This 177-nucleotide RNA was probed chemically with 2A3 and DMS. The RNA was probed in 150 mM KOAc, 10 mM MgCl2 and 150 mM bicine (pH 8.5) at 24 C. Reactivities are given for positions 27 through 126. For DMS the reverse transcriptase was MarathonRT.

RNA sequence: GGGAACGACUCGAGUAGAGUCGAAAAUGAUGGCCGUCGUGCAGCGCGCGGUGGAGGCCGUGGCCGCUCGGGCACCGCGAGUCAGCGCGGUGAUCAAGGUGGACUGGCGUCCCGGGGUCACCGACGCGGUGCUCUACGGGUUCGCCCGUAGAGCACCAAAAGAAACAACAACAACAAC
Reactivity to 2A3 in 0.01 (KOAc 150mM, MgCl2 10mM, bicine 150mM(pH8.5), 24C), signal-to-noise 1, nucleotides 027 to 126: u170g040a040u070g020g000c040c010g010u100c010g010u060g030c040a080g140c030g010c010g010c020g100g010u050g040g130a070g020g110c000c030g000u030g040g020c010c000g000c010u020c040g030g000g020c000a000c010c000g040c020g030a070g140u060c070a050g060c010g010c000g000g000u000g010a040u040c050a040a030g100g000u170g030g040a010c030u070g150g070c110g010u030c000c000c000g000g030g000g010u000c010a010c020c020g090a090c010g020c040
Reactivity to DMS in 0.01 (KOAc 150mM, MgCl2 10mM, bicine 150mM(pH8.5), 24C), signal-to-noise 1, nucleotides 027 to 126: u010g010a100u000g010g010c020c010g050u010c220g000u000g020c060a070g010c030g020c030g010c040g020g000u010g050g040a080g010g030c030c030g000u000g020g030c010c010g000c040u000c160g010g000g000c010a030c000c040g020c020g000a100g040u000c110a120g000c000g020c000g000g020u010g000a020u000c030a060a100g040g010u000g010g010a010c010u010g010g000c240g000u000c000c020c010g000g000g000g000u000c000a010c000c030g010a090c030g030c060